[RMDB]
RNA sequence: GGGAACGACUCGAGUAGAGUCGAAAACGCUGGGACGGAAGCUGUGUGCUAUCCCUGGAACGACGAUCGUACUGAAGCGCGCACGGUACGGGAGUUCCCUGGAUAGCACACAGAUAACGUCCUGUGCUGAAGCGCGCACGGCAACCGAAAGGUGCGAGCAACUAAUUAAGUUCGCUUAAUUAGUUGCAAAAGAAACAACAACAACAAC
Reactivity to DMS in 0.01 (KOAc 150mM, MgCl2 10mM, bicine 150mM(pH8.5), 24C), signal-to-noise 2, nucleotides 027 to 156: c020g020c020u000g000g010g030a030c000g020g010a140a200g000c010u000g000u000g030u010g000c000u000a020u000c000c000c040u000g010g020a040a030c000g010a160c200g040a090u000c000g000u000a020c010u010g020a060a070g010c000g020c040g040c010a300c050g020g010u000a010c010g000g010g010a070g000u000u000c000c000c020u000g000g000a040u000a030g000c000a000c000a000c000a000g000a020u010a050a130c020g000u000c020c000u000g000u000g020c060u000g000a090a060g000c030g060c000g030c000a300c040g030g040c010a130a170c040c010g000a060a100a200g000g020u000g030c030g020a240
Reactivity to 2A3 in 0.01 (KOAc 150mM, MgCl2 10mM, bicine 150mM(pH8.5), 24C), signal-to-noise 5, nucleotides 027 to 156: c030g000c020u030g000g010g010a010c010g040g050a100a110g040c000u000g000u000g000u000g030c000u000a000u000c010c010c050u020g000g000a000a000c000g300a020c030g010a050u100c000g010u000a000c000u030g050a230a050g030c030g000c000g000c030a010c020g020g000u000a000c000g010g000g010a020g000u000u000c010c000c010u040g000g000a000u000a000g000c000a000c000a000c000a000g000a000u000a010a000c010g000u000c000c000u000g010u010g000c020u040g030a130a050g000c010g000c010g000c010a020c020g010g000c010a040a050c010c030g050a090a040a020g040g000u030g000c000g000a020